[RMDB]
The record gives the reactivity of an RNA of 177 nucleotides to 2A3 and DMS.
Source: RMDB library OK1LIB, as collected in RNAgym.
Conditions: 150 mM KOAc, 10 mM MgCl2 and 150 mM bicine (pH 8.5), 24 C.
The 2A3 profile rests on 6,534 reads.
For 2A3 the reverse transcriptase was SuperScript II with manganese.
RNA sequence: GGGAACGACUCGAGUAGAGUCGAAAACCUCGGUCCGCAGGGGAAUCUGUUAACGGAUCGAGGAAAAGGACGAGUGCUUAACAGAUUCCCCUGGCACUUGUCCGUGGAGAUGCGAAAGCAUUUCCACGGAGCUAGAUCGCUUCGGCGAUCUAGCUCCAAAAGAAACAACAACAACAAC
Reactivity to 2A3 in 0.01 (KOAc 150mM, MgCl2 10mM, bicine 150mM(pH8.5), 24C), signal-to-noise 4, nucleotides 027 to 126: c000c000u010c010g000g020u010c010c010g040c040a010g010g000g010g000a010a020u000c010u040g050u070u090a080a020c020g020g010a040u010c000g000a030g000g020a060a040a020a030g060g030a020c010g010a010g030u100g020c090u100u080a060a020c020a000g000a040u000u010c000c020c000c010u000g000g000c010a020c010u050u120g050u050c000c010g000u010g000g010a000g000a000u000g000c010g040a050a020a050g000c000a010u000u000u000c000c000a000c020
Reactivity to DMS in 0.01 (KOAc 150mM, MgCl2 10mM, bicine 150mM(pH8.5), 24C), signal-to-noise 2, nucleotides 027 to 126: c010c000u000c070g010g000u000c050c050g040c040a010g000g000g010g000a010a010u010c010u020g010u000u040a010a030c030g000g020a060u000c000g020a130g000g020a000a000a100a120g000g010a090c020g010a030g000u010g040c190u000u000a050a010c000a030g000a040u000u000c000c000c000c000u000g000g020c150a040c120u020u010g020u030c070c000g040u000g000g010a010g010a000u000g030c000g010a200a120a120g000c000a000u000u000u000c000c000a010c000